[RMDB]
RNA sequence: GGGAACGACUCGAGUAGAGUCGAAAACGCGUACGAUCGAUUACGGCAUCGAUAUAUUAUAUAUACGCGCGGCGCAUCGUAAUCGGCCGAUCGAUUAGCCGCGAUCGCGCGUACGGCAUUAUAUAGCACUCAUAAGCUUGUUCGCAAGCUUAUGAGUAAAAGAAACAACAACAACAAC
Reactivity to 2A3 in 0.01 (KOAc 150mM, MgCl2 10mM, bicine 150mM(pH8.5), 24C), signal-to-noise 5, nucleotides 027 to 126: c050g000c000g010u030a020c030g010a030u020c000g010a000u060u070a030c010g020g000c010a010u010c000g000a000u010a010u000a010u160u210a140u060a040u020a000u010a240c040g050c010g000c000g100g000c050g000c040a110u140c110g140u130a190a050u090c030g120g000c020c030g000a040u040c000g000a010u050u110a030g010c000c020g000c010g000a010u000c000g000c000g000c000g000u000a000c010g040g000c050a020u180u140a100u040a040u080a180g070c020
Reactivity to DMS in 0.01 (KOAc 150mM, MgCl2 10mM, bicine 150mM(pH8.5), 24C), signal-to-noise 5, nucleotides 027 to 126: c100g010c020g010u000a020c040g010a040u000c010g010a040u000u010a080c020g000g010c020a090u000c000g000a030u000a050u000a040u010u020a120u010a290u000a080u000a060c090g030c090g020c020g000g020c010g020c090a090u010c170g000u010a110a090u000c100g000g000c060c080g000a100u000c010g000a030u000u000a110g010c050c030g020c000g000a010u000c000g010c080g010c000g010u000a000c040g020g000c080a080u020u000a090u010a080u000a100g020c170